Structure probing data (2A3) for a 207-nucleotide construct. The 2A3 profile rests on 1,244 reads.
RNA sequence: GGGAACGACUCGAGUAGAGUCGAAAACUCUGGCUUAUCUGACUUCGACAAGGUCCUCCCGGGAGGGCACUGCAGAGGAAGUGACGUGACCGCUGGUGUAGGAAGAUGAGAGGGAACUGCAGAGGACAGUGGCUAGUCUCCUCUGGCUCUGAACUCACGAGACUGUAGUUUUCGAACUACAGUCUCGAAAAGAAACAACAACAACAAC
Reactivity to 2A3 in 0.01 (KOAc 150mM, MgCl2 10mM, bicine 150mM(pH8.5), 24C), signal-to-noise 2, nucleotides 027 to 156: c040u040c020u010g050g050c010u070u080a030u100c050u100g070a030c020u080u030c100g080a110c060a080a130g050g010u020c000c010u020c010c020c070g000g070g010a020g040g000g000c080a110c030u060g000c040a050g040a030g110g040a070a010g030u040g060a020c050g040u070g030a100c020c020g000c070u030g030g030u030g010u040a060g000g040a070a040g040a070u120g020a030g010a030g060g000g000a050a020c070u050g000c030a020g030a070g040g040a090c020a020g010u070g050g000c050u050a020g000u020c010u010c020c000u040c040u000g000g010c000u000c000u010g060a050a020c050u010c040a020

Reactivities are given for positions 27 through 156.